Structure probing data (DMS and 2A3) for a 207-nucleotide construct.

RNA sequence: GGGAACGACUCGAGUAGAGUCGAAAAAGCGCUUCGGCGCUGAGCUUUCCUAAGUCUGAUCGCUCGGAGGUAGGUCGAUAAGGGUCGGAAACGACCCUUUUGACGACCUAUAAUCUCCGAGAUGAUCAGAUAUGGAUUACUGAGUAUUCGUACUCAAUAUACGACUAUAUUUCGAUAUAGUCGUAUAAAAAGAAACAACAACAACAAC
Reactivity to DMS in 0.01 (KOAc 150mM, MgCl2 10mM, bicine 150mM(pH8.5), 24C), signal-to-noise 3, nucleotides 027 to 156: a040g040c010g030c000u000u000c300g030g010c030g040c000u000g000a050g020c050u000u000u000c000c000u000a100a300g020u000c010u010g000a010u000c000g010c000u000c000g010g010a030g090g010u000a020g000g020u000c000g010a170u000a010a020g020g020g020u000c000g000g010a150a130a260c010g010a020c000c000c000u000u000u000u020g010a300c120g010a030c000c000u000a030u000a100a080u010c000u010c000c000g010a010g000a020u010g020a010u010c000a010g010a000u000a130u000g010g010a080u000u010a100c050u000g010a070g010u000a090u010u010c160g020u000a180c010u000c010a030a290
Reactivity to 2A3 in 0.01 (KOAc 150mM, MgCl2 10mM, bicine 150mM(pH8.5), 24C), signal-to-noise 2, nucleotides 027 to 156: a000g000c010g010c050u070u170c300g100g000c010g010c020u010g000a020g050c040u070u110u050c000c000u030a090a040g040u020c000u000g000a000u000c000g000c050u000c000g000g000a000g010g020u020a000g000g000u000c010g010a010u000a030a000g000g000g020u000c010g030g000a030a100a050c000g030a020c030c040c190u020u000u000u050g010a010c010g000a000c000c000u000a010u000a010a010u000c000u000c000c000g000a000g000a010u010g000a000u000c000a010g000a000u000a010u020g010g000a050u100u180a170c100u110g010a000g000u030a010u030u190c220g040u040a040c060u100c040a040a000
The reactions ran in a buffer of 150 mM KOAc, 10 mM MgCl2 and 150 mM bicine (pH 8.5), at 24 C. The data come from the RNA Mapping Database (RMDB), library RNAMAK. Values cover nucleotides 27 to 156. 2A3 adducts were read by reverse transcription with SuperScript II with manganese.